Source: RMDB library OK1LIB, as collected in RNAgym.
Structure probing data (2A3 and DMS) for a 177-nucleotide construct.
For 2A3 the reverse transcriptase was SuperScript II with manganese.
Values cover nucleotides 27 to 126.
The reactions ran in a buffer of 150 mM KOAc, 10 mM MgCl2 and 150 mM bicine (pH 8.5), at 24 C.
For 2A3, 822 sequencing reads were counted.
RNA sequence: GGGAACGACUCGAGUAGAGUCGAAAAGAAGGAGAUGAAAGCGACUUUAGAAUCGGCUAACUGAGCAGUCAGAUCCAGACGGCAAGUAUCGUCGCCAGAGAUACAGUCGCAAAUAGCCGCAGGAGAAAUCCCACGGACUAUUCGUAGUCCGUGGGAUAAAAGAAACAACAACAACAAC
Reactivity to 2A3 in 0.01 (KOAc 150mM, MgCl2 10mM, bicine 150mM(pH8.5), 24C), signal-to-noise 2, nucleotides 027 to 126: g110a050a030g040g020a040g000a070u140g060a100a100a030g030c010g000a000c000u000u060u010a140g030a060a100u160c000g030g010c020u050a130a000c030u020g010a010g030c010a010g040u030c000a000g000a100u100c060c000a050g000a030c010g000g000c000a050a050g050u050a040u140c120g020u000c000g100c000c010a000g060a000g000a050u010a050c020a000g030u010c010g000c010a100a030a000u050a040g100c060c010g010c050a040g000g080a070g030a000a130
Reactivity to DMS in 0.01 (KOAc 150mM, MgCl2 10mM, bicine 150mM(pH8.5), 24C), signal-to-noise 2, nucleotides 027 to 126: g000a020a080g010g000a060g000a120u070g000a140a130a100g020c000g000a020c010u020u020u030a090g010a190a180u020c040g000g000c040u010a060a060c040u000g000a000g010c190a030g010u010c010a050g010a120u020c150c130a160g010a170c000g000g000c000a120a020g010u000a010u030c010g000u030c130g020c010c050a090g040a090g020a110u000a030c150a090g000u000c090g000c050a020a060a080u040a040g030c100c030g000c160a060g040g000a090g000a040a020